Structure probing data (DMS and 2A3) for a 177-nucleotide construct. For DMS, 5,166 sequencing reads were counted. DMS adducts were read by reverse transcription with MarathonRT. 2A3 adducts were read by reverse transcription with SuperScript II with manganese.
RNA sequence: GGGAACGACUCGAGUAGAGUCGAAAAGGUGAAGCAAUUAAAGGAAUUAAAGGCGUAGCGAAAGGCGUUUUACCUAUUGCUAAGUCACUUGAAGGUGGCUUUAGCUAUGCAGAUCAACUUGGUCAACCUUUCACGGUUAAUUCGUUAACCGUGAAAGAAAAGAAACAACAACAACAAC
Reactivity to DMS in 0.01 (KOAc 150mM, MgCl2 10mM, bicine 150mM(pH8.5), 24C), signal-to-noise 3, nucleotides 027 to 126: g040g020u010g000a110a080g000c060a100a070u030u020a080a130a040g010g010a170a160u040u000a060a090a040g010g030c030g030u000a060g000c060g000a060a100a050g010g010c030g030u000u000u000u000a090c040c000u000a070u050u000g020c030u000a030a020g000u000c010a010c020u010u060g020a140a190g010g030u000g000g000c000u000u010u000a020g010c000u000a010u020g000c050a040g000a080u010c010a040a070c110u000u010g010g020u010c100a060a090c180
Reactivity to 2A3 in 0.01 (KOAc 150mM, MgCl2 10mM, bicine 150mM(pH8.5), 24C), signal-to-noise 7, nucleotides 027 to 126: g060g010u050g050a040a000g040c050a020a040u150u120a250a060a090g090g020a100a150u150u130a190a100a050g060g000c000g020u020a040g070c060g140a060a020a010g100g010c030g010u020u030u070u070a040c000c000u040a070u080u100g000c000u000a000a000g010u010c000a010c040u100u210g180a170a060g130g000u020g000g010c000u070u070u050a000g000c000u010a040u040g030c030a010g000a090u070c020a040a100c100u070u050g010g010u040c020a040a100c000